Structure probing data (DMS and 2A3) for a 207-nucleotide construct. DMS adducts were read by reverse transcription with MarathonRT. Conditions: 150 mM KOAc, 10 mM MgCl2 and 150 mM bicine (pH 8.5), 24 C. The data come from the RNA Mapping Database (RMDB), library OK3TST. The DMS profile rests on 3,488 reads.

RNA sequence: GGGAACGACUCGAGUAGAGUCGAAAAUGGCACUUAAUCUACACCAGAAUUUUCCCUCCUGUAUCUUCCAAGCUGCUUGGAUCUUGGUGCUGAAUUAGGUUGGACUUUGUCUUGUGGGGAAGGGAGGACUAUAGACCCUCAACGUAAGCAAUGGUCAUGGACGUAUUACUUUCGAGUAAUACGUCCAAAAAGAAACAACAACAACAAC
Reactivity to DMS in 0.01 (KOAc 150mM, MgCl2 10mM, bicine 150mM(pH8.5), 24C), signal-to-noise 2, nucleotides 027 to 156: u020g020g020c060a090c040u000u020a110a060u000c040u000a040c060a040c010c020a100g020a080a080u000u000u000u000c010c010c000u000c020c000u050g010u010a050u000c050u000u000c090c040a080a200g020c090u020g050c040u000u020g010g020a050u000c020u000u000g000g010u000g020c050u010g020a080a100u010u010a090g020g050u010u000g050g000a080c090u000u000u000g020u000c010u000u010g000u010g000g000g000g010a150a100g000g000g020a160g060g020a110c040u000a110u000a120g000a140c030c010c030u000c020a060a070c030g010u010a050a090g030c010a080a110u000g020g020u000c040a300
Reactivity to 2A3 in 0.01 (KOAc 150mM, MgCl2 10mM, bicine 150mM(pH8.5), 24C), signal-to-noise 2, nucleotides 027 to 156: u050g030g000c030a050c070u080u180a120a110u040c040u090a050c060a070c040c020a070g040a260a160u130u050u140u150c020c000c010u060c030c000u040g080u050a090u020c030u100u050c020c000a010a060g070c060u090g030c010u170u050g040g010a000u000c000u050u080g070g030u050g110c040u020g030a110a120u060u020a240g090g000u030u100g050g000a040c040u000u010u070g000u100c000u020u000g080u050g000g040g000g010a030a060g020g000g000a040g000g000a010c000u010a010u000a140g080a070c010c000c000u040c010a040a100c030g080u040a010a000g000c020a030a010u020g000g000u060c090a060